The record gives the reactivity of an RNA of 177 nucleotides to 2A3 and DMS. Values are in units of 0.01, from 0 to 300, in steps of 10. DMS adducts were read by reverse transcription with MarathonRT. For DMS, 668 sequencing reads were counted.
[RMDB]
RNA sequence: GGGAACGACUCGAGUAGAGUCGAAAAGUGAAACUCUCUAAGAAACAACAAGAAGGUUUGAGGGAGUAUCUCAGUAUUUUCCAACAACUCGAACAUGCUUAUGCAACCCUUCCUCUUAAUGAGUUUGUAGGAUAACAUCCUUCGGGAUGUUAUCCUAAAAAGAAACAACAACAACAAC
Reactivity to 2A3 in 0.01 (KOAc 150mM, MgCl2 10mM, bicine 150mM(pH8.5), 24C), signal-to-noise 1, nucleotides 027 to 126: g070u080g000a030a000a000c000u020c000u000c000u030a210a070g040a160a080a030c020a020a030c010a040a170g250a170a040g240g000u010u070u120g030a030g040g040g000a000g000u000a030u000c040u000c010a000g000u090a090u030u100u010u000c020c000a010a000c000a010a020c080u060c040g040a030a000c030a080u060g020c000u190u090a060u180g050c060a000a110c030c000c000u000u040c030c010u040c000u080u030a080a020u210g000a020g090u000u210u030g040
Reactivity to DMS in 0.01 (KOAc 150mM, MgCl2 10mM, bicine 150mM(pH8.5), 24C), signal-to-noise 1, nucleotides 027 to 126: g000u000g000a060a040a030c000u000c010u000c030u000a120a160g030a010a030a070c030a080a060c060a090a130g020a170a080g020g010u000u000u000g000a070g020g000g020a040g040u010a040u000c060u000c060a010g000u010a060u000u000u000u020c030c050a070a060c230a060a070c020u000c050g020a040a100c200a040u020g020c000u000u000a060u000g010c030a020a060c040c010c030u000u000c020c040u000c130u020u000a030a050u000g000a060g000u010u000u000g020

The 2A3 profile rests on 758 reads. The RNA was probed in 150 mM KOAc, 10 mM MgCl2 and 150 mM bicine (pH 8.5) at 24 C.